[RMDB]
RNA sequence: GGGAACGACUCGAGUAGAGUCGAAAAGAUAUGGAGCAGCGACGAUCUAACGUAACAUCCAAUCGGAAACGAUUGGUGGUUAGGGAGCUGGCUCCUAAGUCAAAACGAGAUCCUUCGGGAUCUCGAACCAAUUAUUUCCCUUCGGGGAAAUAAUUGGAAAAGAAACAACAACAACAAC
Reactivity to 2A3 in 0.01 (KOAc 150mM, MgCl2 10mM, bicine 150mM(pH8.5), 24C), signal-to-noise 3, nucleotides 027 to 126: g010a000u070a040u170g000g010a010g000c010a000g010c010g140a200c010g000a300u020c000u020a000a010c000g040u030a000a030c030a150u080c010c000a010a010u010c000g040g020a090a070a000c010g010a000u000u010g000g010u000g000g010u010u000a010g020g000g000a000g000c000u030g110g140c000u020c000c000u000a130a000g040u000c030a030a020a060a100c020g010a000g000a000u010c020c000u080u160c300g120g000g000a000u020c000u000c000g000a000a010
Reactivity to DMS in 0.01 (KOAc 150mM, MgCl2 10mM, bicine 150mM(pH8.5), 24C), signal-to-noise 4, nucleotides 027 to 126: g000a050u000a300u000g000g000a020g020c000a050g010c000g020a070c240g000a020u000c000u000a000a020c000g000u000a010a030c190a030u010c000c010a020a000u000c000g010g000a130a070a190c000g000a010u000u000g010g010u000g010g010u000u000a010g010g000g010a030g010c010u000g010g030c010u000c000c000u000a010a070g010u000c040a070a040a130a220c030g000a010g010a000u000c000c000u000u010c200g020g010g000a000u000c000u010c000g000a050a090